[RMDB]
RNA sequence: GGGAACGACUCGAGUAGAGUCGAAAACUGGGAGCUAGCAUGGGACGGGGUGGUAGGGCAGGGCUUGGAACCUGGCCGUCAGCGCCAUUUCCUCUAAGCUCCCCUCAUCAUCCGGGUGGCUGGAAACCUGUAAGUCUGCUUUCGAGCAGACUUACAGAAAAGAAACAACAACAACAAC
Reactivity to DMS in 0.01 (KOAc 150mM, MgCl2 10mM, bicine 150mM(pH8.5), 24C), signal-to-noise 1, nucleotides 027 to 126: c100u030g000g030g000a080g030c050u010a020g050c300a010u010g010g000g000a070c210g020g050g030g020u060g030g020u010a070g000g040g010c040a180g000g000g000c010u000u100g000g030a020a020c190c190u000g000g000c070c000g000u000c100a110g010c170g000c050c000a030u000u000u000c040c030u000c050u010a000a080g000c000u000c000c010c000c110u030c070a000u000c000a170u000c010c030g030g000g000u000g000g040c000u010g000g030a060a090a040c150
Reactivity to 2A3 in 0.01 (KOAc 150mM, MgCl2 10mM, bicine 150mM(pH8.5), 24C), signal-to-noise 3, nucleotides 027 to 126: c070u030g010g000g000a040g020c030u020a050g110c040a230u220g030g010g050a020c110g020g030g000g040u110g010g110u030a090g010g010g010c120a030g070g000g000c070u150u070g020g030a030a030c000c010u010g030g000c030c000g040u300c120a040g030c010g070c060c000a010u000u020u000c060c050u000c040u070a050a020g000c020u020c020c000c000c000u020c010a110u020c000a010u000c040c000g000g010g120u100g080g000c010u020g000g060a040a080a100c000
Chemical mapping of a 177-nucleotide RNA with DMS and 2A3. The data come from the RNA Mapping Database (RMDB), library OK1LIB. The DMS profile rests on 1,335 reads. The reactions ran in a buffer of 150 mM KOAc, 10 mM MgCl2 and 150 mM bicine (pH 8.5), at 24 C. DMS adducts were read by reverse transcription with MarathonRT.